[RMDB]
RNA sequence: GGGAACGACUCGAGUAGAGUCGAAAAGCUAUGACGUAAGGUGGGACUUUUCCUUCUGGAACCUAGCGGUAGGUUCCGAGGGGGGUGUGACUCAGGUACCGCCGUAGAAACUGAGUUACGACGUCUACCCGGGAUUCAAACCCGGUCCCCUCCAGAACGUAGAUGCUUUGUUCGCAAAGCAUCUACGAAAAGAAACAACAACAACAAC
Reactivity to 2A3 in 0.01 (KOAc 150mM, MgCl2 10mM, bicine 150mM(pH8.5), 24C), signal-to-noise 1, nucleotides 027 to 156: g070c080u120a140u230g050a030c010g050u100a040a060g050g050u180g020g020g040a070c080u210u060u120u040c020c000u050u070c120u120g000g000a000a000c000c000u000a040g040c050g110g000u010a000g030g000u010u000c000c000g000a030g030g000g000g010g030g020u100g030u030g000a010c000u000c000a000g000g010u060a010c020c010g000c000c020g030u050a040g030a060a210a070c000u010g000a000g010u020u000a040c100g010a000c000g070u020c060u070a080c000c000c000g010g000g030a060u200u240c100a090a070a250c030c000c000g000g020u020c000c000c010c000u030c020c040a110g060a100a040
Chemical mapping of a 207-nucleotide RNA with 2A3. Conditions: 150 mM KOAc, 10 mM MgCl2 and 150 mM bicine (pH 8.5), 24 C.